[RMDB]
RNA sequence: GGGAACGACUCGAGUAGAGUCGAAAAGAGAGAAAUACCGCGCGGAAUCAGAGAAAGGACUGUAAGGACGCGAAAUCCUUUGCGUCAUUUACCGCAAGAAAGAGCGAUGUGUGACGAAUAGAGAGAGGCCGUGAUAGCUAUUCGUAGCUAUCACGGCAAAAGAAACAACAACAACAAC
Reactivity to 2A3 in 0.01 (KOAc 150mM, MgCl2 10mM, bicine 150mM(pH8.5), 24C), signal-to-noise 2, nucleotides 027 to 126: g100a010g010a000g070a000a070a000u040a210c040c000g030c000g000c010g040g080a060a020u020c000a000g050a010g150a200a050a050g030g090a020c020u030g060u080a040a040g060g020a000c000g000c010g030a000a000a060u190c010c000u100u080u210g050c060g000u000c010a010u030u040u060a060c010c000g000c000a020a020g130a060a030a000g060a000g020c050g000a070u050g000u000g050u050g130a020c060g000a000a160u200a020g030a000g000a000g000a010g100
Reactivity to DMS in 0.01 (KOAc 150mM, MgCl2 10mM, bicine 150mM(pH8.5), 24C), signal-to-noise 1, nucleotides 027 to 126: g000a080g060a250g040a000a080a140u140a080c060c140g020c080g000c000g000g090a220a160u010c190a030g030a080g000a110a000a050g000g000a040c010u050g000u000a030a050g000g000a080c000g000c030g020a110a030a050u020c080c210u020u090u090g000c040g000u000c010a010u000u030u010a110c110c080g000c000a060a120g000a050a000a130g000a110g010c010g000a130u000g000u000g030u000g000a000c060g000a040a160u010a040g050a180g040a120g020a070g080
Source information
Source: RMDB library OK1LIB, as collected in RNAgym. An RNA of 177 nucleotides, treated with 2A3 and DMS and read out base by base. The DMS profile rests on 1,145 reads.